Chemical mapping of a 207-nucleotide RNA with 2A3. Reactivities are rounded to 0.1 and cut off at 0 and 3.
RNA sequence: GGGAACGACUCGAGUAGAGUCGAAAAUCGGGACGCAACAGAAGCCGACCGGGCCAACCCAGCGCCAUACGUACUAUAGCGAAUGCGAUGAAUUUCGAUUCAUCGCCCCGCGGGUGCUGGACGAGGAUGCCCCCCCGGAGAAGCGCGCCGGGGUGCACUCUCUCAGAUACUUCGGUAUCUGAGAGAGAAAAGAAACAACAACAACAAC
Reactivity to 2A3 in 0.01 (KOAc 150mM, MgCl2 10mM, bicine 150mM(pH8.5), 24C), signal-to-noise 1, nucleotides 027 to 156: u110c010g010g000g020a010c030g070c030a160a120c070a270g200a300a040g090c040c010g040a010c010c010g000g010g070c000c010a130a190c020c000c000a010g020c010g000c000c000a020u080a100c030g150u030a050c110u180a120u250a090g030c020g040a050a020u110g020c010g000a000u000g000a000a000u030u040u190c150g030a010u000u000c000a000u000c000g000c000c000c000c000g000c010g020g000g000u000g000c000u000g000g010a010c070g000a110g000g040a040u140g000c000c000c020c000c000c020c000g040g000a070g050a120a060g110c080g010c010g000c040c000g000g000g000g000u020g000c000a010